[RMDB]
RNA sequence: GGGAACGACUCGAGUAGAGUCGAAAAGAUAUGGACUGACCCUACUUUUGACGAGCCCAUGGUCGGAAACGACCAUGGCGCUCGAUAAGUAGCAGUCCUAAGUCAAAGCUCUAGUUCGCUAGAGCAAGAAAAAGUUGAUGUUCGCAUCAACUUUUUCAAAAGAAACAACAACAACAAC
Reactivity to DMS in 0.01 (KOAc 150mM, MgCl2 10mM, bicine 150mM(pH8.5), 24C), signal-to-noise 2, nucleotides 027 to 126: g000a050u000a300u020g000g000a000c000u000g000a240c230c300c010u000a010c000u000u000u010u010g020a210c160g000a020g010c000c010c000a000u000g020g000u000c000g020g010a080a080a100c010g050a000c000c000a000u000g010g010c160g000c010u000c010g000a030u000a000a010g010u000a010g030c020a010g000u000c000c010u010a040a130g020u000c030a080a180a180g010c000u010c000u000a010g000u010u010c260g010c000u000a010g000a020g010c020a050a050
Reactivity to 2A3 in 0.01 (KOAc 150mM, MgCl2 10mM, bicine 150mM(pH8.5), 24C), signal-to-noise 1, nucleotides 027 to 126: g000a010u090a060u130g000g000a010c020u030g070a080c090c000c000u000a000c010u090u130u190u240g300a260c210g010a000g020c030c000c010a000u000g010g060u000c000g030g030a120a010a050c010g030a000c000c000a000u010g000g030c030g020c000u010c000g000a000u000a010a010g010u000a010g000c010a000g000u000c010c010u000a110a000g050u020c100a170a140a030g020c000u000c000u000a000g070u100u090c300g000c140u020a010g000a000g010c020a010a010
The record gives the reactivity of an RNA of 177 nucleotides to DMS and 2A3. Source: RMDB library TTRDES, as collected in RNAgym. For DMS the reverse transcriptase was MarathonRT.